[RMDB]
RNA sequence: GGGAACGACUCGAGUAGAGUCGAAAAUGAAGCAAAUCCAUAAUUGCCAAUGAUGAGCAAUUCGCUAAUGCCGCCUAAAAACGGUUAGCCGGGGCUGCUAGAGCCUUGUUACCAAAGAUAGCCGGCGUUACGGCAUGAUGGUUCGCCAUCAUGCCAAGGUAUGGAUAUGGUUCGCCAUAUCCAUACCAAAAGAAACAACAACAACAAC
Reactivity to DMS in 0.01 (KOAc 150mM, MgCl2 10mM, bicine 150mM(pH8.5), 24C), signal-to-noise 2, nucleotides 027 to 156: u000g030a170a080g010c040a060a090a180u000c010c030a140u000a100a040u010u000g000c000c050a090a150u000g040a140u000g010a140g000c010a030a080u000u000c000g000c030u000a050a060u000g020c000c010g030c080c020u010a080a070a120a070a080c140g010g020u000u000a060g010c040c030g020g000g010g000c020u010g020c070u000a150g010a030g040c010c000u000u020g000u000u000a150c030c010a110a080a110g000a300u000a050g010c050c020g010g020c020g020u000u000a050c040g000g000c000a030u000g000a020u000g020g000u000u000c300g000c040c010a030u000c010a000u000g000c000c000a010a020
Reactivity to 2A3 in 0.01 (KOAc 150mM, MgCl2 10mM, bicine 150mM(pH8.5), 24C), signal-to-noise 6, nucleotides 027 to 156: u140g020a070a000g060c060a080a050a100u060c020c010a060u100a100a030u050u010g000c010c020a150a170u220g130a120u110g020a130g010c010a010a010u110u090c040g010c100u050a050a000u060g010c000c000g030c000c010u060a080a080a000a000a010c050g000g020u060u060a030g020c050c050g000g000g010g010c000u050g050c110u180a080g040a010g280c010c000u000u020g020u020u070a030c010c020a030a060a010g100a060u030a010g030c010c000g020g000c010g030u030u060a040c090g000g000c000a000u000g000a000u000g000g030u040u090c200g040c060c000a000u010c000a000u000g000c010c010a000a010